An RNA of 177 nucleotides, treated with DMS and 2A3 and read out base by base. The 2A3 profile rests on 2,210 reads. The reactions ran in a buffer of 150 mM KOAc, 10 mM MgCl2 and 150 mM bicine (pH 8.5), at 24 C.
RNA sequence: GGGAACGACUCGAGUAGAGUCGAAAAAAGCAGCUACCGGUCCUAAGCUUAAUCCUACUAGGACAGAUAGUCGCAAAUAACAGCGUGCGACCAGUGAGGAGAUAUUUGAGUUCACGCCGGUCGGCCGGACACCUAUCAGGUUCGCCUGAUAGGUGUCAAAAGAAACAACAACAACAAC
Reactivity to DMS in 0.01 (KOAc 150mM, MgCl2 10mM, bicine 150mM(pH8.5), 24C), signal-to-noise 2, nucleotides 027 to 126: a090a050g010c010a030g010c010u000a000c010c000g000g000u000c010c020u000a050a100g010c060u010u010a130a160u030c170c080u000a080c040u000a040g000g000a010c020a040g010a020u000a010g020u000c080g020c010a070a100a060u020a060a080c090a090g010c090g020u000g010c010g010a010c020c040a040g000u000g010a200g000g000a080g000a080u000a140u000u010u010g000a160g010u010u000c030a040c040g000c010c020g020g020u000c040g020g010c010c070g000
Reactivity to 2A3 in 0.01 (KOAc 150mM, MgCl2 10mM, bicine 150mM(pH8.5), 24C), signal-to-noise 2, nucleotides 027 to 126: a020a010g030c030a000g000c010u000a010c020c010g000g000u060c000c010u060a090a030g030c000u130u110a100a020u180c020c020u040a060c020u000a040g000g000a020c010a000g050a010u060a000g030u030c010g020c030a020a060a160u170a080a090c030a050g070c030g070u110g040c000g000a000c000c000a010g010u060g040a100g120g090a050g060a040u190a140u080u140u230g130a090g040u000u030c000a000c000g000c000c010g050g000u040c000g010g040c000c000g020